Structure probing data (2A3 and DMS) for a 207-nucleotide construct. For 2A3, 2,483 sequencing reads were counted.
RNA sequence: GGGAACGACUCGAGUAGAGUCGAAAACCGUGACAUUGCGAAAGCAAGGCUGGCGGUAGGUAGUCAUGGGCGGCGACAGCCUUGGACUGCGGCGUAAAGGUGUACCUGGGGCCGUUAAACCUAUCGUGAAAGGCAACUUGGUUCGCCAAGUUGCCAACUUCACCAAUAGGUUCGCCUAUUGGUGAAGAAAAGAAACAACAACAACAAC
Reactivity to 2A3 in 0.01 (KOAc 150mM, MgCl2 10mM, bicine 150mM(pH8.5), 24C), signal-to-noise 3, nucleotides 027 to 156: c010c000g040u040g050a080c120a230u010u070g000c010g060a130a040a040g030c010a010a010g030g050c060u080g070g000c000g030g000u010a010g000g000u030a010g000u020c020a050u070g040g000g000c040g020g060c090g070a080c090a010g040c030c000u020u050g110g000a000c030u020g000c000g010g000c010g030u090a010a020a060g020g010u170g100u270a190c010c010u020g010g010g100g000c000c000g000u020u100a030a110a010c000c010u000a000u010c000g000u020g080a150a070a030g000g000c000a000a000c000u000u010g000g030u040u040c080g040c090c000a000a000g000u000u000g000c000c000a000a000
Reactivity to DMS in 0.01 (KOAc 150mM, MgCl2 10mM, bicine 150mM(pH8.5), 24C), signal-to-noise 2, nucleotides 027 to 156: c000c010g030u010g000a060c100a220u000u010g010c000g000a100a110a240g030c010a040a070g010g060c020u010g040g040c020g000g030u000a040g020g010u000a050g010u030c030a060u010g020g000g000c000g010g040c050g020a130c140a190g010c000c000u010u000g000g020a040c040u000g000c020g010g000c000g040u010a090a160a080g010g020u000g020u010a080c020c040u000g020g010g010g040c000c000g060u030u000a050a120a070c020c010u000a050u000c000g000u000g000a050a070a130g000g010c000a000a000c010u020u000g020g030u000u000c300g050c020c000a000a020g010u000u000g000c000c000a000a020
The RNA was probed in 150 mM KOAc, 10 mM MgCl2 and 150 mM bicine (pH 8.5) at 24 C. For DMS, 3,727 sequencing reads were counted.